[RMDB]
RNA sequence: GGGAACGACUCGAGUAGAGUCGAAAACGUACGAUCCGCGGAAUGCUCUAUAGAUAGUGAAACAGGUGAUAUCGGCGCAUCGUCUACGUGCGUUUGUCCGCAACGAUCUGCGGGCGGGCAUGCCGGAAGUGUGUCUUGGUUUCGACCAGGACGCGCUAAAAGAAACAACAACAACAAC
Reactivity to 2A3 in 0.01 (KOAc 150mM, MgCl2 10mM, bicine 150mM(pH8.5), 24C), signal-to-noise 9, nucleotides 027 to 126: c020g020u060a010c030g010a050u030c060c020g000c020g050g050a080a040u080g030c010u010c020u070a110u060a140g100a090u060a040g160u140g180a100a120a050c070a070g020g100u090g100a070u050a040u120c020g070g000c010g000c010a020u030c020g090u020c060u070a040c020g020u030g010c010g000u010u030u070g010u000c000c000g000c010a070a120c090g090a120u060c030u090g010c010g010g000g000c000g000g010g000c020a020u060g030c010c010g040g040a040
Reactivity to DMS in 0.01 (KOAc 150mM, MgCl2 10mM, bicine 150mM(pH8.5), 24C), signal-to-noise 9, nucleotides 027 to 126: c050g010u010a040c050g000a050u010c120c030g020c030g010g010a060a060u010g000c030u010c030u010a130u030a080g010a100u020a070g010u020g010a110a100a120c170a100g000g010u010g010a080u010a060u010c030g000g010c020g010c160a020u010c040g000u010c080u010a050c040g010u000g010c020g000u010u010u010g010u000c000c000g010c010a040a110c240g010a120u030c120u010g010c010g000g000g010c010g000g000g000c010a030u010g010c020c020g000g010a120
The data come from the RNA Mapping Database (RMDB), library OK1LIB. Structure probing data (2A3 and DMS) for a 177-nucleotide construct. The RNA was probed in 150 mM KOAc, 10 mM MgCl2 and 150 mM bicine (pH 8.5) at 24 C. Values cover nucleotides 27 to 126. DMS adducts were read by reverse transcription with MarathonRT.